[RMDB]
RNA sequence: GGGAACGACUCGAGUAGAGUCGAAAAUUACCGCCCAGGAUGUGGUGCAGCGUUCCUGCAAUAUCCAGGGCACCUAGGUGCAGCCUUGUAGUUUUAGUGGACUUUAGGCUAAAGAAUUUCACUAGCAAAAAUCUUUAAGGGUUCGCCCUUAAAGAAAGUAAACCAUAGCGUUCGCGCUAUGGUUUACAAAAGAAACAACAACAACAAC
Reactivity to 2A3 in 0.01 (KOAc 150mM, MgCl2 10mM, bicine 150mM(pH8.5), 24C), signal-to-noise 1, nucleotides 027 to 156: u100u010a070c000c000g000c010c010c010a000g030g020a020u060g070u050g020g300u010g030c020a000g010c080g080u090u220c030c000u000g000c000a020a000u020a000u050c000c010a000g010g020g020c010a090c000c050u040a030g110g020u080g040c020a010g050c000c020u050u090g080u090a030g010u070u010u100u000a040g000u030g030g000a020c000u000u080u050a000g000g040c020u060a070a030a040g040a060a110u050u130u150c010a020c000u020a010g070c040a000a040a030a070a170u000c000u000u000u000a000a010g050g010g000u040u040c180g090c000c010c000u000u000a000a000a000g010a000a000a000